[RMDB]
RNA sequence: GGGAACGACUCGAGUAGAGUCGAAAAGAUAUGGACCUCGCCAGGGAGAACAAUGAGUUCUAUCCGCAGUCGGAAACGACUGGCGGAUAGAACUCAUUGUUCGAAGAACUGGUGAGGUCCUAAGUCAUCAAAGACUUAUGUUCGCAUAAGUCUUUGAAAAAGAAACAACAACAACAAC
Reactivity to DMS in 0.01 (KOAc 150mM, MgCl2 10mM, bicine 150mM(pH8.5), 24C), signal-to-noise 2, nucleotides 027 to 126: g010a080u000a300u000g010g000a020c000c000u000c010g000c000c010a010g000g000g000a060g010a010a010c000a000a000u000g000a050g010u010u010c020u000a000u000c000c020g050c000a040g000u000c000g000g000a180a150a300c000g030a010c000u010g020g060c010g010g000a010u000a010g000a010a000c000u000c000a010u010u010g010u000u000c000g010a120a190g000a160a180c020u000g000g010u000g010a010g000g010u000c000c000u000a010a060g020u010c040a220